[RMDB]
Structure probing data (DMS and 2A3) for a 207-nucleotide construct.

RNA sequence: GGGAACGACUCGAGUAGAGUCGAAAAAUGGCGGCGAGUUUGGGCGUAAGAAUCUAGGGAAUACGCAGCCUGGGGACGGCUGGAAAUUCCGUGGCCGUGGCCUGAAGCAGCUAACCGGGCGUGAUAACUACCGCCGAUUUAGCCGUGCAUGGCUAGGUCAAGAAGGAGGGUUCGCCCUCCUUCUUGAAAAAGAAACAACAACAACAAC
Reactivity to DMS in 0.01 (KOAc 150mM, MgCl2 10mM, bicine 150mM(pH8.5), 24C), signal-to-noise 1, nucleotides 027 to 156: a040u010g030g030c010g010g000c030g010a100g030u000u000u000g020g030g010c030g010u000a030a090g030a140a090u000c140u010a160g000g000g000a180a300u000a050c030g020c030a200g040c000c010u000g070g020g000g030a140c090g010g020c000u020g060g010a030a080a120u000u000c020c060g010u030g030g020c010c020g050u030g010g030c010c000u000g010a110a080g040c020a060g010c000u000a070a230c020c000g010g000g000c000g090u000g020a120u000a080a040c040u000a020c020c010g020c030c010g000a070u000u000u000a020g000c000c010g000u030g020c110a110u000g000g040c010u010a050g000g000
Reactivity to 2A3 in 0.01 (KOAc 150mM, MgCl2 10mM, bicine 150mM(pH8.5), 24C), signal-to-noise 2, nucleotides 027 to 156: a000u070g000g000c060g040g000c090g050a060g010u060u030u030g070g090g010c000g000u020a050a040g090a160a100u130c110u160a090g050g020g020a090a060u030a020c030g000c000a000g010c000c000u020g000g010g020g070a050c040g020g000c010u000g010g070a020a050a080u190u000c040c060g050u050g020g000c000c000g060u080g090g020c000c020u040g000a040a000g030c020a020g000c000u050a020a120c000c000g000g000g000c010g040u090g100a110u030a060a000c010u020a000c000c000g000c000c000g000a000u000u010u000a000g000c000c000g050u020g090c100a110u190g000g020c040u010a020g050g000
The DMS profile rests on 2,489 reads. Source: RMDB library OK3TST, as collected in RNAgym. Reactivities are given for positions 27 through 156.